[RMDB]
RNA sequence: GGGAACGACUCGAGUAGAGUCGAAAAUGACGAAGGUGCUCAGCUCAGUGUGCAAGGAUCGUAACGAAGAGCGAUUUGAGUGCUACCUUGAAGGUACGACAAGCUGAAUCAACAUAGCGUCUGUAGAGUCCUUCGAGGAUUUCGAUCCUCGAGGGACAAAAGAAACAACAACAACAAC
Reactivity to 2A3 in 0.01 (KOAc 150mM, MgCl2 10mM, bicine 150mM(pH8.5), 24C), signal-to-noise 1, nucleotides 027 to 126: u240g010a000c070g040a170a110g240g040u080g030c050u000c000a000g000c010u110c150a240g200u180g020u110g090c010a030a070g020g010a010u000c040g050u140a150a300c210g090a090a110g020a020g130c000g040a000u080u020u050g030a030g040u030g010c000u000a000c000c000u070u060g110a050a090g010g000u070a060c060g010a010c040a000a000g030c020u010g010a010a040u130c010a050a080c000a090u190a080g140c000g010u020c000u070g120u090a110g050a110